[RMDB]
The record gives the reactivity of an RNA of 177 nucleotides to DMS and 2A3. Values cover nucleotides 27 to 126. DMS adducts were read by reverse transcription with MarathonRT. The 2A3 profile rests on 1,213 reads. The RNA was probed in 150 mM KOAc, 10 mM MgCl2 and 150 mM bicine (pH 8.5) at 24 C. Source: RMDB library OK2TRN, as collected in RNAgym.
RNA sequence: GGGAACGACUCGAGUAGAGUCGAAAAAUAUCGAUUAUACGGCCGAUGCGCUAAUGCUAGCUACGGCGCCGCGCGGCAUAUGCGCGCGCAUCGGCGCUAGCUACGCGAUCGCGAUAUUACGUAGCGCGAUCGCCGCCGACUUCGGUCGGCGGCGAUCAAAAGAAACAACAACAACAAC
Reactivity to DMS in 0.01 (KOAc 150mM, MgCl2 10mM, bicine 150mM(pH8.5), 24C), signal-to-noise 2, nucleotides 027 to 126: a090u010a040u010c020g010a140u020u030a110u000a110c110g020g030c120c030g020a000u000g010c030g000c030u010a140a060u010g010c000u000a010g010c020u000a070c010g000g000c080g030c100c020g020c010g040c010g030g000c230a160u040a090u000g000c010g000c060g000c110g030c020a010u000c020g000g020c200g010c010u000a000g010c000u000a190c180g000c000g000a040u000c000g010c040g000a080u000a020u000u020a070c200g000u000a080g030c100g020c120
Reactivity to 2A3 in 0.01 (KOAc 150mM, MgCl2 10mM, bicine 150mM(pH8.5), 24C), signal-to-noise 1, nucleotides 027 to 126: a020u120a030u050c000g010a050u070u110a070u240a250c080g090g000c090c000g020a010u170g160c010g070c050u060a000a100u170g020c000u010a050g000c030u040a000c010g010g050c020g060c040c030g040c020g020c000g050g020c130a110u170a060u300g040c050g000c020g030c010g010c010a020u030c010g000g000c000g030c000u000a000g000c000u020a000c040g010c020g020a000u010c000g020c000g020a020u010a020u120u070a040c100g050u040a020g090c050g020c020